[RMDB]
RNA sequence: GGGAACGACUCGAGUAGAGUCGAAAAAGCUGGCAUUACGAUGCCAGCAUGAAAAGUUCCGUCAACCAUCCAGCUGUUUGGGGUGAUGCAAACAAACAUCUGGUUGGUUGAGAGAAUUUUUUACUAAUACGGUAUUAGAUUUCGAUCUAAUACCGUAAAAAGAAACAACAACAACAAC
Reactivity to 2A3 in 0.01 (KOAc 150mM, MgCl2 10mM, bicine 150mM(pH8.5), 24C), signal-to-noise 7, nucleotides 027 to 126: a000g000c000u000g000g000c000a010u030u060a050c240g060a010u020g000c000c000a000g000c000a000u020g010a000a020a000a000g010u010u000c010c000g220u020c040a000a000c000c000a000u000c000c000a000g000c020u010g040u010u010u010g060g030g020g070u170g080a120u270g100c080a090a110a070c000a000a000a010c000a040u000c000u000g000g000u010u000g000g000u000u000g000a000g000a000g010a000a000u010u020u010u010u020u050a090c070u070a030a090
Reactivity to DMS in 0.01 (KOAc 150mM, MgCl2 10mM, bicine 150mM(pH8.5), 24C), signal-to-noise 5, nucleotides 027 to 126: a080g000c010u000g010g000c000a010u000u030a100c210g000a050u000g010c000c000a000g000c000a010u010g000a010a010a020a010g000u000u000c010c060g010u010c000a010a010c000c000a000u000c000c010a000g010c080u000g000u000u000u000g010g010g010g030u030g020a120u020g020c140a130a120a140c000a000a010a010c000a000u000c000u000g010g000u000u000g000g000u000u000g000a030g000a070g010a010a000u000u000u000u000u000u010a090c160u020a060a180
Source: RMDB libraries RFM100 and RFMREP, as collected in RNAgym. This 177-nucleotide RNA was probed chemically with 2A3 and DMS. High DMS reactivity at an A or C suggests that its Watson-Crick edge is free. Reactivities are given for positions 27 through 126.